[RMDB]
RNA sequence: GGGAACGACUCGAGUAGAGUCGAAAAGAUAUGGAUCGUCAUGGCUAGACCACUCGGAAACGAGAGGUCUUGGACCCAUCCCGAUCCUAAGUCAAAAGCGUUGUGAAAGUUCGCUUUCACAACGCAAGUAUUUGUGACUCUUCGGAGUCACAAAUACAAAAGAAACAACAACAACAAC
Reactivity to DMS in 0.01 (KOAc 150mM, MgCl2 10mM, bicine 150mM(pH8.5), 24C), signal-to-noise 1, nucleotides 027 to 126: g010a000u000a100u000g010g000a000u000c000g010u000c080a000u010g020g000c050u000a010g000a000c000c000a130c000u000c000g000g000a070a030a120c000g020a000g000a070g020g030u000c000u020u010g020g030a110c300c000c010a010u000c060c010c010g020a020u000c010c020u000a020a030g000u000c020a090a120a110a200g030c000g020u000u040g000u020g000a000a000a000g010u010u050c170g020c050u000u000u000c000a010c000a000a000c000g000c000a000a030